[RMDB]
RNA sequence: GGGAACGACUCGAGUAGAGUCGAAAAGGUAUGAUCCGGGGAUUGCUGUAUAGAUACUCAAACAGCUGAAUUCGGCGCAUCUAGUACAUGAGUUUGUCGCCUACGAUGUGCGGUCGGGCAUGCCCGGGGUGUGUCUAGCUUUCGAGCUGGACGCGCUAAAAGAAACAACAACAACAAC
Reactivity to DMS in 0.01 (KOAc 150mM, MgCl2 10mM, bicine 150mM(pH8.5), 24C), signal-to-noise 2, nucleotides 027 to 126: g000g000u020a030u020g000a300u160c000c000g000g000g000g000a300u060u000g000c000u000g000u020a300u030a070g010a100u040a050c150u040c130a050a110a050c030a020g010c010u020g010a050a080u010u010c030g000g030c000g020c010a010u000c010u020a020g010u010a040c100a070u020g000a060g010u020u010u010g000u010c080g000c140c010u000a020c090g010a030u010g010u000g010c000g000g020u000c010g000g010g000c010a020u010g010c020c010c020g000g020
Reactivity to 2A3 in 0.01 (KOAc 150mM, MgCl2 10mM, bicine 150mM(pH8.5), 24C), signal-to-noise 2, nucleotides 027 to 126: g020g000u070a000u100g110a300u000c000c000g000g000g000g020a120u000u280g000c000u000g000u030a090u040a040g140a030u070a070c010u010c040a030a050a000c000a000g000c010u030g090a020a050u040u050c030g040g000c000g000c000a000u000c000u000a010g010u030a020c000a050u080g000a020g110u030u060u060g030u030c010g010c000c000u000a000c040g000a000u000g000u010g000c000g010g020u050c000g020g000g000c000a000u020g010c010c000c020g020g030

Conditions: 150 mM KOAc, 10 mM MgCl2 and 150 mM bicine (pH 8.5), 24 C. Chemical mapping of a 177-nucleotide RNA with DMS and 2A3. For DMS the reverse transcriptase was MarathonRT. Source: RMDB library OK1LIB, as collected in RNAgym. As a SHAPE reagent, 2A3 marks flexible, mostly unpaired nucleotides at the ribose 2'-OH. Reactivities are given for positions 27 through 126. For 2A3 the reverse transcriptase was SuperScript II with manganese.